[RMDB]
RNA sequence: GGGAACGACUCGAGUAGAGUCGAAAAGCGUACUACGAUAUGAACUACAGCCACAGAUGGGAGGGUGCUCCCAAAUAGGAGCACCCAUCGAUCAUCUUUGGCUGCAUAUCGUAUCGCAAAACUACGCUAAAGAUAGUUCGCUAUCUUUAGCGUAGAACACUAAUAUGUCCUUCGGGACAUAUUAGUGAAAAGAAACAACAACAACAAC
Reactivity to DMS in 0.01 (KOAc 150mM, MgCl2 10mM, bicine 150mM(pH8.5), 24C), signal-to-noise 1, nucleotides 027 to 156: g020c040g000u000a130c010u000a000c010g000a010u000a010u010g000a050a070c030u010a040c010a030g010c010c020a030c050a020g020a000u000g010g000g000a100g010g040g030u000g010c000u000c000c000c050a020a060a140u030a030g030g000a030g020c000a010c000c000c010a020u010c070g010a160u020c010a000u000c000u000u000u000g000g000c000u010g000c010a040u000a040u000c010g000u000a000u000c010g000c010a030a070a100a200c010u000a010c000g030c000u000a000a010a010g000a020u000a010g040u000u000c300g040c000u010a000u000c000u010u000u000a010g020c000g020u000a000g010a060a200
Reactivity to 2A3 in 0.01 (KOAc 150mM, MgCl2 10mM, bicine 150mM(pH8.5), 24C), signal-to-noise 4, nucleotides 027 to 156: g010c020g050u080a070c050u000a000c060g000a010u000a010u000g040a130a050c090u160a090c300a010g020c000c000a020c020a020g010a010u020g010g010g010a030g000g010g000u000g000c000u030c020c020c030a070a160a030u250a050g000g000a010g000c010a000c020c010c020a040u060c010g010a020u030c000a000u000c000u020u010u010g000g000c000u000g000c000a000u000a000u000c000g000u030a010u060c000g000c000a000a010a020a060c010u000a000c010g000c000u010a000a000a000g000a000u000a000g000u050u040c250g010c160u000a000u000c000u000u000u000a000g000c000g000u000a000g000a000a000
Notes:
Structure probing data (DMS and 2A3) for a 207-nucleotide construct. For DMS the reverse transcriptase was MarathonRT. The reactions ran in a buffer of 150 mM KOAc, 10 mM MgCl2 and 150 mM bicine (pH 8.5), at 24 C. 2A3 is a SHAPE reagent: it acylates the 2'-hydroxyl of flexible nucleotides of all four kinds. It was measured as part of the RMDB library RNAMAK.